Structure probing data (2A3) for a 207-nucleotide construct. For 2A3 the reverse transcriptase was SuperScript II with manganese. The reactions ran in a buffer of 150 mM KOAc, 10 mM MgCl2 and 150 mM bicine (pH 8.5), at 24 C. For 2A3, 1,582 sequencing reads were counted.

[RMDB]
RNA sequence: GGGAACGACUCGAGUAGAGUCGAAAAUCCUAAGUCGAUCCAAACACGCUCAUCGAUCUAUAGUGGAGGCUCGGAAACGAGCCGAUGAAACUAUAGGGAGAGCGUGCACUGGAUCGAUAUGGAAAAAGCUUCUGGUGUCUUCGGACACCAGAAGCAAGCAACUGUAUAGAUUCGUCUAUACAGUUGCAAAAGAAACAACAACAACAAC
Reactivity to 2A3 in 0.01 (KOAc 150mM, MgCl2 10mM, bicine 150mM(pH8.5), 24C), signal-to-noise 2, nucleotides 027 to 156: u020c010c000u030a180a010g020u000c000g000a000u010c000c010a000a100a040c000a020c000g000c010u010c000a300u300c100g060a060u020c010u000a000u000a000g010u010g020g000a010g010g010c000u010c000g070g030a050a060a060c010g020a010g000c000c010g000a020u000g000a000a000a010c000u000a000u010a000g010g030g000a040g000a000g010c000g000u000g010c000a010c010u010g000g000a000u000c000g000a000u000a040u030g010g040a050a030a050a050a010g030c000u070u050c000u000g020g020u000g030u000c000u010u120c300g100g000a000c000a000c020c000a000g000a020a010g020c000a030a000